[RMDB]
RNA sequence: GGGAACGACUCGAGUAGAGUCGAAAAACGAUCUCUUUGUACCUAUUUUUGUCCCACUCCACACUAUCCAUUUUAUUCACAAAGACGACGAGACGAGGAACUCCAAAAGCCUUUACCAGAGUAAGAUGCUCCAAUGUUUGGCCUUCCUCUGAGAUCCGCUAUACAGGGCAUUCGUGCCCUGUAUAGCAAAAGAAACAACAACAACAAC
Reactivity to 2A3 in 0.01 (KOAc 150mM, MgCl2 10mM, bicine 150mM(pH8.5), 24C), signal-to-noise 1, nucleotides 027 to 156: a000c060g060a110u020c000u010c000u100u070u050g060u050a080c020c000u090a190u050u180u010u100u100g090u030c020c000c000a100c100u000c000c000a010c020a050c060u090a070u110c040c060a040u100u010u050u080a170u120u210c050a070c030a080a050a040g040a000c070g030a010c060g020a030g010a000c080g000a030g090g000a040a030c030u040c100c020a040a000a000a100g100c000c020u110u050u060a040c060c020a010g030a000g100u060a070a010g100a090u160g020c030u040c060c000a110a110u140g090u170u150u110g140g010c030c010u000u000c060c010u000c000u010g000a050g000a050u140c100c100
The data come from the RNA Mapping Database (RMDB), library OK3TST. Structure probing data (2A3) for a 207-nucleotide construct. 2A3 is a SHAPE reagent: it acylates the 2'-hydroxyl of flexible nucleotides of all four kinds. 2A3 adducts were read by reverse transcription with SuperScript II with manganese. The RNA was probed in 150 mM KOAc, 10 mM MgCl2 and 150 mM bicine (pH 8.5) at 24 C.